[RMDB]
RNA sequence: GGGAACGACUCGAGUAGAGUCGAAAAUCGCCAACAUCUCGCGUUUUAGUUGCAGCAAGCAGCGUAACAGACCCAGCUUUGCGCCCGUAACGCGAUUCGGCUUGAGCAAUGGCGUCUUGCACGCUGUGCGCUACCGCAGUUUCGACUGCGGUAGCGCAAAAGAAACAACAACAACAAC
Reactivity to 2A3 in 0.01 (KOAc 150mM, MgCl2 10mM, bicine 150mM(pH8.5), 24C), signal-to-noise 2, nucleotides 027 to 126: u050c000g140c010c050a040a000c010a170u150c020u110c030g080c030g030u000u000u050u050a170g000u060u220g090c080a030g030c000a000a080g000c020a000g020c010g030u000a050a080c080a050g000a050c010c010c020a010g010c120u020u040u050g020c000g040c000c090c000g150u100a040a090c060g000c000g160a060u070u120c000g000g040c000u070u140g040a070g000c100a070a300u110g040g000c040g090u000c000u080u140g020c050a000c040g030c000u000g050u060